[RMDB]
RNA sequence: GGGAACGACUCGAGUAGAGUCGAAAAUUAUCAAACCAGAUCCAAAUUACGUUCACGACCUCGAUGAUGUUCGCCCGGAGCUGUUCACACAGAUCCUCGUGGACGGAGAAACUGAGUUCGUACCGGACAUGGACAGAACCUUCGGGUUCUGUCCAUGAAAAGAAACAACAACAACAAC
Reactivity to DMS in 0.01 (KOAc 150mM, MgCl2 10mM, bicine 150mM(pH8.5), 24C), signal-to-noise 2, nucleotides 027 to 126: u050u000a030u030c200a050a080a090c150c050a120g000a040u010c110c070a050a080a140u000u010a070c000g000u020u000c000a030c010g000a040c080c020u000c240g010a000u010g000a190u040g000u000u000c010g000c050c000c180g000g020a000g000c020u000g020u030u000c060a140c200a110c120a000g020a050u000c000c000u000c300g000u000g020g000a090c020g020g000a130g010a050a030a080c170u020g000a080g020u000u000c060g000u000a060c210c050g000g020a190
Reactivity to 2A3 in 0.01 (KOAc 150mM, MgCl2 10mM, bicine 150mM(pH8.5), 24C), signal-to-noise 2, nucleotides 027 to 126: u120u040a140u190c090a030a050a050c040c000a020g060a130u010c020c020a070a070a140u260u130a110c120g000u000u060c030a000c040g000a030c020c000u060c100g040a110u150g010a000u040g050u060u010c000g050c020c000c000g000g020a010g000c010u010g010u060u120c100a080c000a000c020a070g020a060u010c000c000u030c040g020u030g000g020a030c000g020g000a010g050a020a110a000c070u030g000a010g050u010u050c070g000u070a100c010c070g020g000a000
Structure probing data (DMS and 2A3) for a 177-nucleotide construct.
DMS adducts were read by reverse transcription with MarathonRT.
The 2A3 profile rests on 1,185 reads.
The reactions ran in a buffer of 150 mM KOAc, 10 mM MgCl2 and 150 mM bicine (pH 8.5), at 24 C.